The record gives the reactivity of an RNA of 207 nucleotides to 2A3 and DMS. It was measured as part of the RMDB library M2RFPK. For DMS the reverse transcriptase was MarathonRT.
RNA sequence: GGGAACGACUCGAGUAGAGUCGAAAAGUAGAAUCUGUCAAGCAAAACCCCAAAACCUUACACUGAGAGCAUUUAGCCUGAUUACACUUUAAAUCAAAUCAGGCAAUAGAGAGAAACUCGAGAGGUGAAACGGGAGUAAUGUUCGCAUUACUCCCAAGUUACCUUAAACGUUCGCGUUUAAGGUAACAAAAGAAACAACAACAACAAC
Reactivity to 2A3 in 0.01 (KOAc 150mM, MgCl2 10mM, bicine 150mM(pH8.5), 24C), signal-to-noise 2, nucleotides 027 to 156: g110u090a020g050a100a090u070c060u070g120u090c060a030a020g060c040a050a060a090a150c030c030c000c050a010a100a040a070c040c040u070u090a070c080a050c080u110g010a020g000a010g100c050a050u070u060u110a060g040c000c000u000g010a010u030u130a050c080a030c130u180u170u300a090a140a070u160c080a020a020a020u000c000a000g000g000c010a000a010u000a000g020a000g010a010g000a070a070a010c000u010c010g080a110g000a020g110g030u040g020a080a070a060c080g000g000g000a010g000u000a000a000u000g000u020u040c100g020c080a000u000u010a000c000u010c010c000c000a000a000
Reactivity to DMS in 0.01 (KOAc 150mM, MgCl2 10mM, bicine 150mM(pH8.5), 24C), signal-to-noise 2, nucleotides 027 to 156: g020u010a170g010a200a050u000c070u010g010u020c050a000a130g000c010a070a080a090a160c060c010c000c020a040a080a110a110c030c010u000u000a140c080a060c110u000g000a160g010a060g010c010a060u000u000u000a110g010c000c000u000g000a010u010u010a100c060a070c070u010u010u040a070a100a160u010c030a080a050a060u000c000a040g010g020c000a050a110u000a060g040a150g010a160g000a090a070a070c010u000c030g010a100g010a040g000g030u000g000a010a050a080c060g020g050g020a040g010u010a030a010u010g010u010u010c290g010c000a030u000u020a010c000u000c000c070c010a010a030